The record gives the reactivity of an RNA of 207 nucleotides to DMS and 2A3. It was measured as part of the RMDB library M2RFPK.
RNA sequence: GGGAACGACUCGAGUAGAGUCGAAAAAUCUUUAAGCAGAUGGCAGGUUCACCCCGUACGGUGCGGAAGUUCGCGCUUCCGUGAAACGCGAAAAUCUGACGGUGGCUGCAAGUCGCAUCGCAAAACCUAUAGCUUGUUAGGUUCGCCUAACAAGCAAACAACUUCUUGAGUUCGCUCAAGAAGUUGUAAAAGAAACAACAACAACAAC
Reactivity to DMS in 0.01 (KOAc 150mM, MgCl2 10mM, bicine 150mM(pH8.5), 24C), signal-to-noise 1, nucleotides 027 to 156: a070u000c050u000u010u000a030a140g050c050a120g020a110u000g020g040c080a030g010g020u000u000c050a120c040c020c070c010g020u000a070c040g010g060u030g000c020g040g010a050a050g000u010u000c160g020c280g000c000u000u000c020c050g080u000g000a080a020a020c040g050c070g010a070a040a060a060u000c060u000g000a080c010g010g050u000g000g000c020u000g060c050a040a080g020u010c040g010c030a080u000c040g030c060a100a070a060a110c050c050u000a110u000a190g010c000u000u000g000u000u000a000g000g000u000u000c300g000c000c000u010a000a020c000a020a020g000c000a010a000
Reactivity to 2A3 in 0.01 (KOAc 150mM, MgCl2 10mM, bicine 150mM(pH8.5), 24C), signal-to-noise 4, nucleotides 027 to 156: a000u080c030u040u140u070a100a000g010c070a060g010a060u030g050g040c020a020g030g040u130u110c030a050c000c010c010c020g010u050a090c030g000g000u040g000c010g010g010a020a020g030u100u220c070g020c030g000c060u000u000c020c000g010u040g050a090a070a030c060g030c000g080a040a010a010a090u090c050u030g030a050c010g040g040u060g060g000c060u040g020c060a060a030g060u080c040g000c030a020u040c010g000c000a050a050a060a120c020c030u130a110u080a220g010c010u010u000g000u010u000a010g030g010u030u030c160g050c040c000u000a000a010c000a000a000g000c000a000a010